RNA sequence: GGGAACGACUCGAGUAGAGUCGAAAAACUUGUGUGAGUAUACUUUUAGUACAAGCGAGUACACGCAGUAUACUGCCACUUGUGUGAGAAUACUUUUAGUACAAGCGAGUACACGCAGUAUACCGCCAAAGACUUAAUCUUUCGAGAUUAAGUCUUUAAAAGAAACAACAACAACAAC
Reactivity to 2A3 in 0.01 (KOAc 150mM, MgCl2 10mM, bicine 150mM(pH8.5), 24C), signal-to-noise 9, nucleotides 027 to 126: a000c080u110u070g040u020g010u020g110a140g030u040a010u010a050c000u020u040u050u230a040g010u000a010c020a040a030g040c030g040a020g020u010a000c060a010c090g030c020a000g000u000a010u020a040c030u060g050c020c010a100c080u110u130g090u050g010u040g210a080g060a080a030u040a040c010u030u110u130u230a070g000u010a010c010a040a010g010c010g010a000g010u030a010c040a020c090g010c000a000g000u000a000u000a000c000c000g000c000c010
Reactivity to DMS in 0.01 (KOAc 150mM, MgCl2 10mM, bicine 150mM(pH8.5), 24C), signal-to-noise 9, nucleotides 027 to 126: a080c060u010u010g010u030g020u000g000a130g010u000a010u010a010c000u000u010u020u030a230g020u000a000c020a030a300g010c040g010a300g000u000a000c010a090c210g030c300a020g010u000a010u000a020c030u010g010c070c030a080c110u030u030g010u050g020u010g000a040g010a070a020u000a010c020u000u010u030u030a210g010u000a000c030a030a300g010c020g000a300g000u000a010c010a060c180g000c300a030g000u000a000u000a010c000c010g000c000c080
Background:
The record gives the reactivity of an RNA of 177 nucleotides to 2A3 and DMS. The DMS profile rests on 32,574 reads. The 2A3 profile rests on 28,782 reads. The reactions ran in a buffer of 150 mM KOAc, 10 mM MgCl2 and 150 mM bicine (pH 8.5), at 24 C.